Notes: An RNA of 177 nucleotides, treated with DMS and 2A3 and read out base by base. It was measured as part of the RMDB library RFM100. 2A3 adducts were read by reverse transcription with SuperScript II with manganese.

RNA sequence: GGGAACGACUCGAGUAGAGUCGAAAAAUCGCUCAAAGGAUAAAAGGUACUCCGGGGAUAACAGGCUGAUCCCUCCCAAGAGCUCACAUCGACGGAGUGGUUUGGCACCUCGAUGUCGGCUCGUCACAUACCGUCUCCCUUUCGAGGGAGACGGUAUAAAAGAAACAACAACAACAAC
Reactivity to DMS in 0.01 (KOAc 150mM, MgCl2 10mM, bicine 150mM(pH8.5), 24C), signal-to-noise 2, nucleotides 027 to 126: a080u020c050g040c050u000c020a070a170a180g000g000a070u020a020a020a090a170g000g000u010a050c030u000c050c030g000g130g000g000a130u000a050a150c130a090g000g010c000u110g030a170u020c060c030c000u000c000c000c130a150a010g000a000g010c030u080c300a000c000a000u000c030g030a050c160g000g000a040g020u020g000g000u060u000u000g040g010c040a030c000c060u000c010g000a000u000g000u000c300g000g010c000u000c020g060u060c290a060c130
Reactivity to 2A3 in 0.01 (KOAc 150mM, MgCl2 10mM, bicine 150mM(pH8.5), 24C), signal-to-noise 2, nucleotides 027 to 126: a000u020c000g000c000u030c070a140a110a110g100g000a040u070a050a150a000a020g010g000u070a100c000u020c020c010g000g000g010g020a050u060a200a040c010a060g000g040c010u050g010a070u010c000c070c000u000c050c050c020a110a040g010a030g000c000u030c000a000c010a020u000c000g010a050c160g070g010a100g080u100g060g100u150u190u050g150g000c000a000c000c000u000c000g000a000u000g010u010c020g010g000c000u000c010g120u050c000a110c010